An RNA of 207 nucleotides, treated with 2A3 and DMS and read out base by base. It was measured as part of the RMDB library OK3TST. Values cover nucleotides 27 to 156.
RNA sequence: GGGAACGACUCGAGUAGAGUCGAAAACGAUCUGUUCGCAGAUCGAGCUACGGAGACGUAGCAAAGCGAGCGAGGGCACGGGCGCUCGCACUACCGGAACUCAAACCAUAUCCACGUGUGCUAGGAUAUGGCCGUGCCCAGAGGAACAGCACACGAAAUCAUAAUGACGCUUCGGCGUCAUUAUGAUAAAAGAAACAACAACAACAAC
Reactivity to 2A3 in 0.01 (KOAc 150mM, MgCl2 10mM, bicine 150mM(pH8.5), 24C), signal-to-noise 3, nucleotides 027 to 156: c020g010a000u000c000u010g040u110u070c260g050c140a000g000a010u000c000g000a050g010c000u010a010c010g060g000a090g040a070c020g010u000a000g000c030a000a130a000g010c000g000a000g000c000g010a010g000g010g020c000a000c010g030g010g010c010g000c000u000c010g010c000a010c000u080a080c020c050g120g070a090a070c050u070c190a120a060a120c010c010a000u000a000u010c000c000a080c120g030u020g000u010g010c020u030a060g000g000a010u000a010u000g020g000c000c000g000u000g010c000c000c000a070g050a060g040g120a050a050c060a100g000c020a020c010a000c030g040a060a170
Reactivity to DMS in 0.01 (KOAc 150mM, MgCl2 10mM, bicine 150mM(pH8.5), 24C), signal-to-noise 1, nucleotides 027 to 156: c010g000a000u000c010u040g060u020u010c260g020c090a000g020a010u000c010g000a110g060c010u020a000c020g010g030a190g000a300c030g080u030a010g030c030a040a040a110g020c100g020a000g010c030g010a100g000g000g010c060a040c040g000g000g030c020g040c020u000c010g030c000a010c040u000a300c090c020g020g000a060a020c080u020c070a110a140a070c010c020a010u020a000u000c000c030a190c090g020u010g040u000g040c020u040a170g000g000a030u000a030u020g030g000c040c040g000u000g000c000c040c030a180g030a110g000g010a160a100c150a020g070c000a010c060a020c040g010a080a120
The reactions ran in a buffer of 150 mM KOAc, 10 mM MgCl2 and 150 mM bicine (pH 8.5), at 24 C. Values are in units of 0.01, from 0 to 300, in steps of 10.